[RMDB]
Background
The data come from the RNA Mapping Database (RMDB), library TTRDEL. Structure probing data (2A3 and DMS) for a 177-nucleotide construct.
RNA sequence: GGGAACGACUCGAGUAGAGUCGAAAAGAUAUGGAGAACGAGGAUCACUCCGUGACCGCAGAUACUCGGAAACGAGAGUAGGUCGAGUGGGAGUUCUCCUAAGUCAAAACCUUGCUUCGGCAAGGAAGAUACGUGCCUUGUUCGCAAGGCACGUAUCAAAAGAAACAACAACAACAAC
Reactivity to 2A3 in 0.01 (KOAc 150mM, MgCl2 10mM, bicine 150mM(pH8.5), 24C), signal-to-noise 2, nucleotides 027 to 126: g030a000u130a030u140g000g000a020g020a020a010c020g070a290g120g040a050u070c020a010c020u020c010c070g200u100g020a010c000c020g000c080a030g030a070u050a090c010u020c020g010g040a050a050a010c010g000a000g020a000g020u060a130g030g000u000c000g010a050g000u030g010g030g010a030g000u000u000c000u010c000c000u010a080a000g040u020c030a000a030a090a160c010c000u000u000g000c010u070u060c210g120g000c000a020a000g010g010a000a000
Reactivity to DMS in 0.01 (KOAc 150mM, MgCl2 10mM, bicine 150mM(pH8.5), 24C), signal-to-noise 2, nucleotides 027 to 126: g000a020u020a300u000g010g000a020g000a010a010c000g010a110g020g010a090u030c000a010c000u000c000c300g010u000g000a020c000c010g030c150a110g020a100u010a020c000u020c000g010g010a140a100a220c000g000a020g000a040g020u000a030g030g020u000c020g000a000g020u000g010g000g000a060g000u000u000c010u000c000c000u000a020a080g000u010c060a100a040a140a180c010c000u000u000g000c000u000u000c150g000g000c020a020a010g000g000a050a030

High DMS reactivity at an A or C suggests that its Watson-Crick edge is free. The RNA was probed in 150 mM KOAc, 10 mM MgCl2 and 150 mM bicine (pH 8.5) at 24 C. For 2A3, 3,375 sequencing reads were counted.